[RMDB]
RNA sequence: GGGAACGACUCGAGUAGAGUCGAAAAGAUAUGGACUAAUGGAGGAACUACAGGGCAUUAUCGGAAACGAUAAUGUCCUGCCGAUGAAAUUAGUCCUAAGUCAAAGGCUGACGUUCGCGUCAGCCAAGAAACCAGUUGAGUUCGCUCAACUGGUUUCAAAAGAAACAACAACAACAAC
Reactivity to DMS in 0.01 (KOAc 150mM, MgCl2 10mM, bicine 150mM(pH8.5), 24C), signal-to-noise 1, nucleotides 027 to 126: g020a000u020a300u010g010g000a040c000u000a000a000u000g000g000a100g000g030a070a090c100u050a250c000a010g070g000g020c000a030u000u000a000u000c000g010g030a090a080a150c010g000a010u000a000a000u000g000u000c070c000u000g000c000c030g020a020u020g000a130a100a000u000u020a020g000u000c000c000u000a070a100g000u000c060a120a090a090g020g000c000u000g010a030c010g020u000u040c260g030c000g050u010c000a000g000c010c000a020a020